[RMDB]
RNA sequence: GGGAACGACUCGAGUAGAGUCGAAAAAUGUAAACGUGGCGGAUGGAUAAUAAACCACAGAGGGAUCUAUGUAGAAUACCUUAUCCUCGAAACGGCAGAAGAGGAGCUCAUGUUCAAAAGAAUGUGUCUUGUAGUCAUUCUUCGGAAUGACUACAAGAAAAGAAACAACAACAACAAC
Reactivity to DMS in 0.01 (KOAc 150mM, MgCl2 10mM, bicine 150mM(pH8.5), 24C), signal-to-noise 1, nucleotides 027 to 126: a090u000g020u000a060a090a060c140g000u000g010g010c050g000g000a090u010g030g060a060u000a050a040u000a170a140a060c050c100a030c120a180g010a050g000g040g010a090u020c030u000a180u000g000u000a060g010a130a060u000a130c050c040u000u000a090u020c000c000u000c020g000a060a020a190c040g030g040c060a040g010a100a060g010a080g000g020a140g000c090u000c010a040u000g000u000u000c020a100a080a060a180g000a130a020u000g010u000g000u000
Reactivity to 2A3 in 0.01 (KOAc 150mM, MgCl2 10mM, bicine 150mM(pH8.5), 24C), signal-to-noise 1, nucleotides 027 to 126: a000u030g010u020a060a000a030c030g030u030g030g000c110g030g060a090u000g030g000a000u060a250a000u040a020a260a000c030c070a050c050a040g100a030g000g000g040a000u030c010u020a080u300g090u120a020g070a070a030u100a120c000c000u000u050a020u030c000c020u000c000g050a140a090a120c140g070g070c080a020g010a190a030g000a030g010g000a000g000c010u010c100a000u030g070u080u060c000a060a060a090a060g080a040a010u090g100u000g000u100